RNA sequence: GGGAACGACUCGAGUAGAGUCGAAAAGCAUAACUGUUCGCAGUUAUGCAAAACACGAAGCUGGAAACAGACGCAGUGAAACAAACAAAAGCGAAAACAAUAAAAGCCAACAGUUCGCUGUUGGCAACCAUCAGUAGAGGUUCGCCUCUACUGAUGGAAAAGAAACAACAACAACAAC
Reactivity to DMS in 0.01 (KOAc 150mM, MgCl2 10mM, bicine 150mM(pH8.5), 24C), signal-to-noise 2, nucleotides 027 to 126: g020c010a010u000a010a000c000u010g030u000u000c010g070c000a090g000u010u000a000u030g010c000a010a020a110a040c040a020c020g000a150a240g030c010u000g000g000a170a060a160c050a010g020a130c020g010c160a150g000u000g000a030a020a130c070a050a070a160c130a010a060a120a040g000c000g000a110a040a090a050c200a090a100u000a020a070a150a100g000c000c000a000a000c000a010g000u000u000c300g020c010u000g000u000u000g000g010c010a030a040
Reactivity to 2A3 in 0.01 (KOAc 150mM, MgCl2 10mM, bicine 150mM(pH8.5), 24C), signal-to-noise 2, nucleotides 027 to 126: g000c000a000u000a000a010c000u020g030u080u070c090g000c040a000g000u020u000a000u010g010c000a020a020a000a040c020a000c040g010a030a000g020c010u010g020g030a030a030a020c000a020g180a130c040g000c090a010g010u000g050a080a060a000c040a030a090a000c030a030a120a020a020g030c020g070a040a040a030a050c080a040a030u190a210a170a030a000g000c010c000a010a000c010a000g050u100u120c190g020c090u000g000u020u000g000g070c000a010a020